[RMDB]
Chemical mapping of a 177-nucleotide RNA with DMS and 2A3. In probing experiments dimethyl sulfate is read out at A N1 and C N3, which are open when not base-paired.

RNA sequence: GGGAACGACUCGAGUAGAGUCGAAAAUGGUGGGAUCCUAGCGUCACAUAUUUUGAUCCACAACGCAGCUGUGAUCAUGUAAAUGUCAAUGCAUAUGAGAUCUACAUGAAGAAGAAAGCUAACAUCAGGCGAGUAUGAUAUUCGUAUCAUACUCGCCAAAAGAAACAACAACAACAAC
Reactivity to DMS in 0.01 (KOAc 150mM, MgCl2 10mM, bicine 150mM(pH8.5), 24C), signal-to-noise 2, nucleotides 027 to 126: u000g010g030u010g000g020g000a050u060c030c110u000a040g010c100g050u000c080a080c110a050u010a050u000u010u020u000g000a140u000c020c040a080c110a040a090c140g000c120a030g000c030u000g040u010g000a130u000c000a010u000g010u000a010a040a020u000g010u000c060a040a100u020g020c160a110u010a110u000g000a070g000a000u000c030u010a010c050a050u000g000a040a150g030a120a090g000a080a120a070g000c050u000a030a110c210a050u020c160a080
Reactivity to 2A3 in 0.01 (KOAc 150mM, MgCl2 10mM, bicine 150mM(pH8.5), 24C), signal-to-noise 2, nucleotides 027 to 126: u100g100g020u020g000g000g050a030u020c020c020u040a050g070c000g040u060c040a020c010a060u110a100u040u290u000u110g090a050u060c110c040a040c030a120a000c090g050c130a060g050c030u050g020u020g080a010u030c010a020u000g080u060a100a070a000u090g030u050c030a080a060u130g110c030a110u120a050u160g100a110g000a000u000c010u010a050c000a000u040g010a050a060g120a050a040g040a040a140a000g040c040u050a100a060c000a060u100c090a030
DMS adducts were read by reverse transcription with MarathonRT.